[RMDB]
RNA sequence: GGGAACGACUCGAGUAGAGUCGAAAAGAACUAUUUUCCACAAUGGGAAAUGGGUUCACAUUUGAGCUAGAGUCCAUGAUAUUCUGGGCAAUAGUCAAAGCGACCCAAAUCCAUUUUGGUAACGCCGGAACCAUAGGCAUCUACGGGGACGAUAUUACCGAUAAAUUCUGUUCGCAGAAUUUAUCGGAAAAGAAACAACAACAACAAC
Reactivity to DMS in 0.01 (KOAc 150mM, MgCl2 10mM, bicine 150mM(pH8.5), 24C), signal-to-noise 1, nucleotides 027 to 156: g000a060a130c030u000a060u000u000u000u000c030c020a110c070a110a070u020g020g000g010a010a030a150u010g040g000g030u020u010c050a080c080a110u000u000u000g020a210g040c010u000a020g010a300g030u000c010c010a070u010g040a160u000a140u010u010c140u000g020g000g000c000a070a240u000a040g000u000c000a090a070a070g000c070g000a130c030c000c010a000a080a240u000c040c030a080u000u010u020u000g000g040u000a030a090c080g000c000c120g010g000a140a110c010c020a100u010a060g000g020c160a100u000c030u010a080c000g010g000g000g000a200c030g000a140u000a080u000u000a160
Reactivity to 2A3 in 0.01 (KOAc 150mM, MgCl2 10mM, bicine 150mM(pH8.5), 24C), signal-to-noise 3, nucleotides 027 to 156: g020a040a020c030u070a110u180u110u070u050c010c010a020c010a010a010u020g030g000g090a080a040a070u020g010g020g000u150u150c040a030c030a170u030u020u000g060a090g070c010u000a000g000a000g010u000c010c000a030u110g110a070u160a180u300u140c090u040g000g010g000c000a020a050u000a010g010u010c000a010a020a010g040c050g020a000c010c000c000a020a020a030u010c000c000a000u010u010u000u010g010g000u040a060a010c070g040c020c000g050g060a050a020c020c000a050u050a110g050g000c020a020u060c020u060a030c020g000g000g000g070a010c040g010a030u020a030u160u170a070

Chemical mapping of a 207-nucleotide RNA with DMS and 2A3. Source: RMDB library PDB130, as collected in RNAgym. DMS (dimethyl sulfate) methylates the pairing face of unpaired adenines and cytosines.